[RMDB]
An RNA of 177 nucleotides, treated with 2A3 and DMS and read out base by base. It was measured as part of the RMDB libraries RFM100 and RFMREP. In probing experiments dimethyl sulfate is read out at A N1 and C N3, which are open when not base-paired.

RNA sequence: GGGAACGACUCGAGUAGAGUCGAAAAACACCGGGGACUUGUCCCCACCGUGGUGCCGAGGGGGGCAAGCCGCAGUAACAGCGGUCCGUAAGGGCCGGAAAACUGAAAAAUAAAGUGUCGGGUAGGGUUCUAAUAUGACAUUCGUGUCAUAUUAGAAAAAAGAAACAACAACAACAAC
Reactivity to 2A3 in 0.01 (KOAc 150mM, MgCl2 10mM, bicine 150mM(pH8.5), 24C), signal-to-noise 5, nucleotides 027 to 126: a000c050a030c010c020g020g000g010g040a130c010u010u020g030u060c000c000c000c000a020c010c010g040u100g050g120u120g060c040c010g030a100g000g000g000g000g010g000c000a000a000g010c000c000g000c000a010g000u010a050a020c010a030g020c000g000g000u000c000c000g010u070a090a220g000g000g000c000c000g010g000a000a000a000a000c010u010g070a050a060a030a000a000u140a020a080a020g040u030g020u060c030g030g030g020u060a050g030g040g000
Reactivity to DMS in 0.01 (KOAc 150mM, MgCl2 10mM, bicine 150mM(pH8.5), 24C), signal-to-noise 9, nucleotides 027 to 126: a070c050a070c050c040g010g010g010g010a100c010u000u000g010u000c000c000c000c000a000c020c030g010u010g010g010u010g020c080c020g010a160g000g010g000g000g010g000c000a010a010g010c010c010g000c000a010g000u010a020a160c290a030g000c000g010g010u000c000c000g010u050a140a160g010g010g000c000c000g000g000a000a010a020a020c010u010g000a010a100a080a060a070u020a080a110a130g010u010g010u000c030g000g000g010u000a030g000g000g010